[RMDB]
RNA sequence: GGGAACGACUCGAGUAGAGUCGAAAAGGAGCGACAAGUAUUUAGCUUGAGAUAGCUAAAUCACCUCGGUAUGAUUAGGGUGAGACCUAGGAACCGUAGGGGUAUUCUCAACGGAAGCUUUUGCAGUGAAGGAAGAUACGAUUCGUCGUAUCUUCAAUCGUAUCCAAUGAUUCGUCAUUGGAUACGAAAAAGAAACAACAACAACAAC
Reactivity to DMS in 0.01 (KOAc 150mM, MgCl2 10mM, bicine 150mM(pH8.5), 24C), signal-to-noise 4, nucleotides 027 to 156: g010g020a090g020c040g010a070c040a020a060g020u000a040u000u010u010a010g020c000u000u000g000a300g000a150u010a030g020c000u000a000a030a040u000c030a050c010c000u000c000g020g020u000a090u000g010a220u010u000a030g000g010g030u010g010a260g020a170c020c000u000a090g010g000a130a050c020c020g010u000a040g010g010g010g000u000a050u000u000c020u000c040a070a180c090g010g010a060a130g010c040u000u000u000u000g020c060a060g030u000g000a100a110g010g010a020a020g010a020u000a010c020g020a060u000u010c290g020u000c010g030u000a000u000c010u010u000c010a030a060
Reactivity to 2A3 in 0.01 (KOAc 150mM, MgCl2 10mM, bicine 150mM(pH8.5), 24C), signal-to-noise 7, nucleotides 027 to 156: g080g010a030g030c060g090a080c060a080a030g050u090a050u010u010u000a000g000c000u020u020g020a030g010a090u140a030g000c000u010a010a000a010u020c010a020c010c000u040c040g000g020u300a220u160g050a060u030u040a030g000g020g020u060g090a050g040a050c000c010u020a010g000g020a010a010c010c010g000u030a030g000g000g000g010u010a060u140u070c070u020c020a030a050c050g030g040a060a010g020c020u070u090u130u160g040c100a020g030u060g130a110a020g120g010a000a000g000a000u000a000c000g000a010u000u100c150g050u010c000g000u090a000u000c000u000u000c000a000a010